This 207-nucleotide RNA was probed chemically with 2A3.
2A3 adducts were read by reverse transcription with SuperScript II with manganese.
The RNA was probed in 150 mM KOAc, 10 mM MgCl2 and 150 mM bicine (pH 8.5) at 24 C.

RNA sequence: GGGAACGACUCGAGUAGAGUCGAAAACUUCUGGUAAAAAUCUCAGAACAGUGAAACAUAGCUUUCAUAGGAAGGAAUGUAUUACUGAAUGCCUGUUAUGUGCUAAGUACAUCCUAUGUUAAUAUUUCCUCACAACAAUUCUUUAUUUAUUAGCAUCUAGACUGAUCUACUUCGGUAGAUCAGUCUAAAAAGAAACAACAACAACAAC
Reactivity to 2A3 in 0.01 (KOAc 150mM, MgCl2 10mM, bicine 150mM(pH8.5), 24C), signal-to-noise 1, nucleotides 027 to 156: c000u090u060c000u040g000g000u090a170a160a050a060a160u030c100u010c040a050g010a070a020c000a060g000u000g080a060a090a000c070a000u090a040g020c050u000u060u080c050a090u070a020g020g020a060a030g000g040a140a000u000g020u070a040u070u070a040c020u020g010a110a110u150g000c000c000u080g090u300u040a100u250g100u140g000c010u050a110a000g010u000a060c000a040u000c000c000u040a000u040g000u060u080a030a030u000a140u060u000u010c010c010u090c000a010c020a080a080c000a050a160u100u000c040u100u200u220a180u110u300u080a090u090u210a040g020c000a000u250c020
Values are in units of 0.01, from 0 to 300, in steps of 10. For 2A3, 407 sequencing reads were counted.